The record gives the reactivity of an RNA of 177 nucleotides to DMS and 2A3.
Source: RMDB library OK1LIB, as collected in RNAgym.
For 2A3 the reverse transcriptase was SuperScript II with manganese.

[RMDB]
RNA sequence: GGGAACGACUCGAGUAGAGUCGAAAAGAAAAGAAGAGGGAAAGAGAGAUAUGGAAACGAAGAUUAAGGAAAGCUGAAAAGAAAGCUGUGAACAUAUCGAAGAAAGACUUAAUCGAACCUCGAAGAACCGAUAUCAUUAGUUCGCUAAUGAUAUCGGAAAAGAAACAACAACAACAAC
Reactivity to DMS in 0.01 (KOAc 150mM, MgCl2 10mM, bicine 150mM(pH8.5), 24C), signal-to-noise 7, nucleotides 027 to 126: g030a100a080a100a110g020a120a110g010a010g000g000g000a080a110a080g010a110g010a090g000a050u010a000u000g010g010a090a110a080c120g000a080a120g010a030u000u000a020a030g000g000a070a050a020g000c000u000g000a060a080a140a190g010a050a080a040g000c000u000g010u030g020a060a090c030a020u000a030u010c020g010a080a110g020a100a070a070g000a080c020u010u000a020a020u000c000g000a150a160c030c030u010c020g010a060a060g020a140a100
Reactivity to 2A3 in 0.01 (KOAc 150mM, MgCl2 10mM, bicine 150mM(pH8.5), 24C), signal-to-noise 4, nucleotides 027 to 126: g030a010a060a000a010g110a020a010g020a010g060g030g050a020a160a000g040a030g000a010g010a020u050a000u120g010g030a090a180a020c100g000a020a070g030a050u060u050a050a000g110g000a220a020a030g000c020u010g030a130a010a060a090g150a050a090a020g020c000u010g030u000g020a070a000c020a010u040a000u070c040g040a030a050g060a120a110a010g080a030c000u040u030a000a020u010c000g010a060a070c000c000u010c010g040a070a040g030a090a010